Record summary:
Structure probing data (2A3 and DMS) for a 177-nucleotide construct.
RNA sequence: GGGAACGACUCGAGUAGAGUCGAAAAGGAAAAUAUGUGUCAGUGGAAGGAGGCAAUUGAAUGCGAAGACAAUUUAAUGUGAAAUCCAGUUCUCUCAAUAAUAUUUUCGAUAAUAUCUCAUUGAGUGUGACCGGAUACUGUUCGCAGUAUCCGGUCAAAAAGAAACAACAACAACAAC
Reactivity to 2A3 in 0.01 (KOAc 150mM, MgCl2 10mM, bicine 150mM(pH8.5), 24C), signal-to-noise 1, nucleotides 027 to 126: g040g120a140a050a200a070u140a000u120g000u020g030u150c100a000g130u000g090g040a090a000g000g000a030g000g000c000a020a000u010u010g010a060a030u120g000c000g000a000a060g030a050c000a030a020u120u110u110a140a050u060g030u000g110a090a000a000u070c000c000a020g000u030u000c000u000c000u000c000a000a000u000a010a000u030a000u000u000u000u040c010g000a000u050a150a050u010a090u050c180u000c110a020u000u080g080a080g050u050g050
Reactivity to DMS in 0.01 (KOAc 150mM, MgCl2 10mM, bicine 150mM(pH8.5), 24C), signal-to-noise 1, nucleotides 027 to 126: g000g010a120a040a050a050u000a040u010g000u000g000u010c150a090g020u000g000g000a090a040g010g010a060g060g030c140a080a030u000u000g010a100a010u000g040c040g010a120a140g000a210c130a060a130u000u000u070a050a060u040g000u010g000a060a060a020u010c000c000a030g000u000u050c080u000c000u030c000a000a070u090a100a000u030a000u000u000u030u100c130g040a110u020a000a040u000a040u000c110u010c020a000u000u000g000a030g040u000g000
Conditions: 150 mM KOAc, 10 mM MgCl2 and 150 mM bicine (pH 8.5), 24 C.
For DMS, 1,320 sequencing reads were counted.